[RMDB]
RNA sequence: GGGAACGACUCGAGUAGAGUCGAAAAUGGAGUGAGCUUUAAACAUCUUGGGCAUUGGCUUUAAGUCGAUCCACACUAAGCUCAAUGUACAGUUAAUUAAAAAGUGAGCUAGUUUGCGCAAAAAUGGCGAUCCAAGUCUAUUCGUAGACUUGGAUCGAAAAGAAACAACAACAACAAC
Reactivity to DMS in 0.01 (KOAc 150mM, MgCl2 10mM, bicine 150mM(pH8.5), 24C), signal-to-noise 2, nucleotides 027 to 126: u010g010g020a120g020u000g000a290g010c020u000u000u000a110a160a120c090a020u000c030u020u010g000g010g000c030a070u010u000g040g010c020u000u000u000a040a050g020u000c100g000a100u010c110c110a110c160a040c050u010a020a080g030c010u000c020a020a050u020g030u000a090c110a090g000u010u000a060a110u000u020a050a090a030a070a060g010u000g000a090g010c010u000a060g000u000u000u000g010c070g000c090a030a060a080a060a050u010g010g030
Reactivity to 2A3 in 0.01 (KOAc 150mM, MgCl2 10mM, bicine 150mM(pH8.5), 24C), signal-to-noise 2, nucleotides 027 to 126: u110g070g000a030g030u070g030a050g010c000u170u060u100a060a080a010c020a070u030c040u050u060g000g080g000c040a030u020u020g000g000c010u150u130u090a120a010g000u040c010g080a100u080c000c020a070c010a000c010u010a010a030g000c000u000c080a000a070u060g010u030a050c000a050g060u090u080a150a150u070u130a120a160a000a010a020g050u030g020a000g000c020u040a000g060u070u110u140g050c100g000c060a000a070a030a060a090u140g080g050